[RMDB]
RNA sequence: GGGAACGACUCGAGUAGAGUCGAAAAUACACUUUACGUGUGCUCGUUUCAUUACUUUGUCCCAAACCAGGCACGCGUAAUUAAAGGCCAGUUUGGCCAGGUCCGCGUUAUCGAUGGUCACCAAUAAUGAUUAGAUAUGCUUCGGCAUAUCUAAUCAAAAAGAAACAACAACAACAAC
Reactivity to DMS in 0.01 (KOAc 150mM, MgCl2 10mM, bicine 150mM(pH8.5), 24C), signal-to-noise 4, nucleotides 027 to 126: u010a120c130a130c090u010u000u000a020c010g020u000g020u000g000c020u000c200g010u000u010u000c090a070u010u010a130c110u010u000u000g000u000c010c020c030a060a070a080c090c120a110g000g010c030a010c010g010c000g000u000a000a010u010u000a060a060a100g010g000c010c010a090g010u000u000u010g000g030c000c000a030g000g010u000c040c020g010c050g000u010u000a090u010c060g000a080u010g010g020u000c060a090c060c040a080a090u010a100a140
Reactivity to 2A3 in 0.01 (KOAc 150mM, MgCl2 10mM, bicine 150mM(pH8.5), 24C), signal-to-noise 3, nucleotides 027 to 126: u100a010c050a030c060u050u040u020a020c010g010u010g000u000g000c000u030c050g030u020u050u070c070a060u070u090a090c090u110u100u190g040u070c040c000c000a010a020a050c080c050a060g000g040c000a000c010g000c000g000u000a010a010u060u120a090a030a010g010g000c000c000a080g170u090u210u200g070g040c000c000a010g040g030u010c020c030g000c020g020u020u070a080u110c050g030a100u050g040g060u050c030a070c090c040a030a050u170a120a090
Background:
An RNA of 177 nucleotides, treated with DMS and 2A3 and read out base by base. For 2A3, 2,444 sequencing reads were counted. 2A3 adducts were read by reverse transcription with SuperScript II with manganese.